[RMDB]
RNA sequence: GGGAACGACUCGAGUAGAGUCGAAAAGAUAUGGACGUCCGGGAAGAGGUACACGAUUCUGCAACUAUAUUCGGAAACGAAUAUAGUUGCAGGGUGUACUACCCACCUUCCGGGACGUCCUAAGUCAUCUAAUCUCUAACUUCGGUUAGAGAUUAGAAAAAGAAACAACAACAACAAC
Reactivity to DMS in 0.01 (KOAc 150mM, MgCl2 10mM, bicine 150mM(pH8.5), 24C), signal-to-noise 3, nucleotides 027 to 126: g010a050u000a240u010g000g000a010c000g020u010c000c010g010g000g000a020a010g000a150g000g000u000a000c010a030c030g010a220u020u020c020u010g010c000a010a020c000u010a010u000a010u000u000c000g000g010a050a080a200c000g000a030a000u000a000u010a000g010u000u000g000c000a000g010g010g010u000g010u000a020c040u000a060c100c110c180a300c220c000u000u000c000c010g010g040g000a000c000g010u000c010c000u010a000a060g010u000c020a170
Reactivity to 2A3 in 0.01 (KOAc 150mM, MgCl2 10mM, bicine 150mM(pH8.5), 24C), signal-to-noise 1, nucleotides 027 to 126: g000a010u070a070u100g000g020a000c020g000u000c060c110g260g020g010a010a010g000a050g080g000u020a000c010a010c020g220a230u300u300c030u040g000c010a000a000c010u000a010u000a010u010u010c000g010g000a030a060a030c000g010a000a000u000a000u000a000g000u000u000g030c010a010g000g000g010u000g010u000a020c000u020a060c050c030c020a060c000c000u020u000c010c000g040g000g000a010c010g010u000c000c000u000a000a010g020u000c010a010
Structure probing data (DMS and 2A3) for a 177-nucleotide construct. Values cover nucleotides 27 to 126. For DMS the reverse transcriptase was MarathonRT. Source: RMDB library TTRINS, as collected in RNAgym. The 2A3 profile rests on 3,589 reads.